[RMDB]
RNA sequence: GGGAACGACUCGAGUAGAGUCGAAAAGCUUCAAUGCAUCACGCCAUAAACCCAUGGUCAGGCAAGCCGACUCAGCAUUUAUGCAACAUAGCUCGGUACCACGGAUAAGGGGCGUCCGCUUGCUGUAAUCAUAGUACGUGUUCGCACGUACUAUGAUAAAAGAAACAACAACAACAAC
Reactivity to DMS in 0.01 (KOAc 150mM, MgCl2 10mM, bicine 150mM(pH8.5), 24C), signal-to-noise 6, nucleotides 027 to 126: g000c030u000u000c110a100a080u030g000c030a070u010c080a060c080g000c010c000a070u020a100a140a140c120c010c030a100u000g000g010u000c120a090g010g010c130a080a080g000c020c020g000a060c030u010c120a130g000c000a030u010u020u010a040u010g000c020a100a100c190a090u020a090g010c090u010c040g000g010u020a030c050c050a080c060g000g010a060u010a070a140g010g000g000g010c040g000u020c070c070g010c080u000u000g020c000u020g000u000a090
Reactivity to 2A3 in 0.01 (KOAc 150mM, MgCl2 10mM, bicine 150mM(pH8.5), 24C), signal-to-noise 9, nucleotides 027 to 126: g010c010u090u080c080a090a140u200g020c010a070u100c060a020c070g010c010c000a030u100a100a140a080c010c010c010a040u060g030g000u100c110a080g070g000c030a040a020g000c010c010g020a030c020u040c100a030g000c010a050u060u150u200a160u270g020c030a060a060c040a160u180a050g020c040u020c030g000g040u070a080c020c020a060c050g030g000a040u090a150a120g040g010g010g000c010g020u030c020c010g030c020u030u070g000c010u040g070u180a070